About this RNA: The data come from the RNA Mapping Database (RMDB), library RNAMAK. This 207-nucleotide RNA was probed chemically with 2A3 and DMS. For 2A3, 4,833 sequencing reads were counted. DMS adducts were read by reverse transcription with MarathonRT. For DMS, 4,903 sequencing reads were counted.

[RMDB]
RNA sequence: GGGAACGACUCGAGUAGAGUCGAAAAAGGUGUUUCGACACCUAUCAACCCGUAGGACUUACUACCCACCUCCAUGACCCAGCCGCCACUUCGAAAGAGGUGGAUGGCUGCAUGGAGAGGUAAGUCCUAAACGGCUUCACCGUGCUUCGGCACGGAAUGUGUUAUGACAAUUCGUUGUCAUAACACAAAAAGAAACAACAACAACAAC
Reactivity to 2A3 in 0.01 (KOAc 150mM, MgCl2 10mM, bicine 150mM(pH8.5), 24C), signal-to-noise 4, nucleotides 027 to 156: a010g070g010u080g020u060u110u210c240g090a020c020a010c010c000u000a140u110c060a030a110c040c000c000g030u030a020g000g020a000c000u010u010a000c020u140a120c030c050c040a060c010c000u010c000c000a020u020g060a160c050c060c010a010g000c000c000g000c000c000a020c010u020u000c010g080a100a070a060g000a010g020g020u000g010g010a040u050g000g000c000u000g000c000a000u000g000g000a010g000a000g000g000u000a000a000g000u000c000c000u010a000a010a000c010g070g000c040u200u180c130a080c050c000g000u000g000c010u060u110c210g100g000c000a000c000g010g040a030a040
Reactivity to DMS in 0.01 (KOAc 150mM, MgCl2 10mM, bicine 150mM(pH8.5), 24C), signal-to-noise 2, nucleotides 027 to 156: a010g040g020u010g010u000u000u010c220g020a190c000a000c000c010u000a020u000c080a070a160c020c000c020g030u010a030g030g010a040c010u000u010a010c000u000a030c030c030c010a300c130c000u000c000c010a030u000g010a130c100c090c060a020g000c000c010g000c000c010a040c020u020u000c000g000a140a160a250g020a040g000g030u000g010g020a020u010g070g020c000u000g020c000a000u000g010g000a010g010a010g040g020u000a020a010g000u000c000c000u000a000a010a030c030g010g000c040u000u020c030a240c000c000g000u000g040c000u000u000c250g030g010c010a020c000g000g000a030a030